[RMDB]
RNA sequence: GGGAACGACUCGAGUAGAGUCGAAAAGUGUUUAGUUCGCUAAACACAAAAAAGCGUACUACUAUUCCUGAUACUCCAACAGCAGGAGUCCCAAAUAGGACUCCUGACAUGGAGUCAGGAGAUAGUAUCGCAAAAAAGCCUUUCUUCGGAAAGGCAACGUGCCAGUUCCCUUCGGGGAACUGGCACGAAAAGAAACAACAACAACAAC
Reactivity to 2A3 in 0.01 (KOAc 150mM, MgCl2 10mM, bicine 150mM(pH8.5), 24C), signal-to-noise 1, nucleotides 027 to 156: g000u000g000u010u000u000a020g000u010u020c190g020c120u020a000a010a010c010a000c000a000a000a000a000a210a000g000c010g030u080a040c020u000a000c000u020a030u040u040c000c000u000g010a060u110a180c020u000c020c010a090a040c050a170g050c000a000g000g000a000g000u000c020c020c000a300a300a060u230a040g010g000a000c000u000c000c000u020g000a020c000a010u020g000g000a010g000u000c000a000g000g010a030g000a000u010a000g000u000a020u100c030g000c000a030a030a030a030a030a030g000c000c000u000u000u000c020u020u040c180g060g000a000a000a000g000g000c020a000a010
An RNA of 207 nucleotides, treated with 2A3 and read out base by base.
2A3 adducts were read by reverse transcription with SuperScript II with manganese.
It was measured as part of the RMDB library RNAMAK.
The 2A3 profile rests on 1,097 reads.